The record gives the reactivity of an RNA of 177 nucleotides to DMS and 2A3.
RNA sequence: GGGAACGACUCGAGUAGAGUCGAAAACUCGCCGGGCUCGUAGGUAGAAGCUGAGUUUUGUUUUGCUUCCGCCCUGCAAGCCCGGUAGCUAAAGAUGAGUACUAUCACUUCGGUGAUAGUACUCAUCGACGCCUAAUAUGUUCGCAUAUUAGGCGUCAAAAGAAACAACAACAACAAC
Reactivity to DMS in 0.01 (KOAc 150mM, MgCl2 10mM, bicine 150mM(pH8.5), 24C), signal-to-noise 3, nucleotides 027 to 126: c010u010c050g010c000c000g000g010g010c010u000c050g030u000a020g010g000u000a120g010a020a010g010c010u010g010a040g010u000u010u010u010g020u000u000u000u000g000c010u000u000c000c030g010c150c010c010u010g000c020a010a020g010c000c000c000g000g000u000a000g000c120u010a070a090a160g010a010u000g000a020g010u000a010c000u000a000u000c000a010c000u000u010c190g030g010u000g000a000u000a000g010u000a000c000u000c000a000u000c000
Reactivity to 2A3 in 0.01 (KOAc 150mM, MgCl2 10mM, bicine 150mM(pH8.5), 24C), signal-to-noise 5, nucleotides 027 to 126: c010u010c020g000c000c000g000g000g000c010u010c010g010u010a000g000g010u010a010g010a010a010g000c040u060g100a080g150u150u150u210u210g200u050u090u100u060g160c000u000u000c010c030g060c060c000c000u000g010c010a010a000g000c000c000c000g000g000u000a000g000c020u200a090a180a020g010a000u000g000a000g000u000a000c000u000a000u000c000a000c010u030u090c260g030g000u000g000a000u000a000g000u000a000c000u000c000a000u000c000

For 2A3 the reverse transcriptase was SuperScript II with manganese.
For DMS the reverse transcriptase was MarathonRT.
The RNA was probed in 150 mM KOAc, 10 mM MgCl2 and 150 mM bicine (pH 8.5) at 24 C.
2A3 is a SHAPE reagent: it acylates the 2'-hydroxyl of flexible nucleotides of all four kinds.
For 2A3, 11,956 sequencing reads were counted.
For DMS, 7,781 sequencing reads were counted.
It was measured as part of the RMDB library RFMREP.